Structure probing data (2A3 and DMS) for a 177-nucleotide construct.
[RMDB]
RNA sequence: GGGAACGACUCGAGUAGAGUCGAAAAGUUUGUGUGUGUGCACGUAAUGUAUACACUCCGUGCACUGUUCAUAUAUUAUGACAAGGCAAGGUAAAAUCAGGCUAAUAAAACAAUAAGAUGAAAAUGGGUGACUUUUAGGAUUCGUCCUAAAAGUCACAAAAGAAACAACAACAACAAC
Reactivity to 2A3 in 0.01 (KOAc 150mM, MgCl2 10mM, bicine 150mM(pH8.5), 24C), signal-to-noise 1, nucleotides 027 to 126: g060u080u090u030g060u000g020u000g010u010g010u000g000c000a000c090g130u220a120a120u110g010u040a040u000a040c060a010c030u000c000c000g010u020g000c010a000c080u020g020u020u060c000a010u070a040u050a090u250u140a020u080g020a010c000a020a090g020g030c000a000a000g060g000u120a070a100a000a080u090c010a000g000g000c000u010a080a070u070a120a230a020a000c070a070a070u180a110a030g100a060u200g070a080a060a100a010u100g110g090
Reactivity to DMS in 0.01 (KOAc 150mM, MgCl2 10mM, bicine 150mM(pH8.5), 24C), signal-to-noise 2, nucleotides 027 to 126: g060u010u000u010g020u010g030u020g000u000g010u000g010c000a010c110g030u020a080a160u000g030u000a040u000a050c090a060c050u000c070c000g000u000g000c000a030c010u000g000u000u010c020a030u010a100u020a130u010u000a020u010g000a030c060a080a110g000g020c000a040a050g010g020u010a070a060a080a080u010c050a020g000g040c000u000a040a160u000a080a040a050a090c180a070a070u000a080a060g000a110u000g010a030a060a080a060u010g010g020
For DMS the reverse transcriptase was MarathonRT. The 2A3 profile rests on 885 reads.